Notes:
Conditions: 150 mM KOAc, 10 mM MgCl2 and 150 mM bicine (pH 8.5), 24 C. Structure probing data (DMS and 2A3) for a 177-nucleotide construct. It was measured as part of the RMDB library M2PK50. Reactivities are rounded to 0.1 and cut off at 0 and 3.
RNA sequence: GGGAACGACUCGAGUAGAGUCGAAAAGUUACACGCUUCGGCGUGUAACAAAUACUCAAACGGUCGCGGAAACGAGAGGACACUCAAGGAGGCAUCCAUGCAAAACCCAUUGCUUCGGCAAUGGGAACUUCAAUGAUAACUUCGGUUAUCAUUGAAGAAAAGAAACAACAACAACAAC
Reactivity to DMS in 0.01 (KOAc 150mM, MgCl2 10mM, bicine 150mM(pH8.5), 24C), signal-to-noise 5, nucleotides 027 to 126: g000u000u000a010c000a000c010g020c000u000u000c190g020g010c000g040u000g000u000a000a000c000a040a080a080u000a090c020u010c020a110a100a140c120g000g000u000c020g000c060g000g010a070a090a060c090g000a090g010a060g000g000a060c080a070c060u010c060a080a120g000g020a070g000g000c050a040u000c010c060a060u000g000c130a070a050a080a130c000c000c000a010u000u000g010c000u000u020c200g010g000c000a010a000u000g000g000g000a000a020
Reactivity to 2A3 in 0.01 (KOAc 150mM, MgCl2 10mM, bicine 150mM(pH8.5), 24C), signal-to-noise 3, nucleotides 027 to 126: g000u000u000a000c000a000c010g020c010u040u060c180g100g000c000g000u000g000u000a000a000c000a000a000a000u030a000c000u010c000a070a060a080c060g040g010u040c020g010c010g090g040a060a070a030c040g010a020g000a010g100g040a020c020a010c080u060c030a040a060g080g000a020g050g000c020a030u020c040c010a040u110g070c030a030a060a120a200c010c000c000a000u010u000g000c000u000u050c220g100g000c010a000a000u000g000g000g010a000a000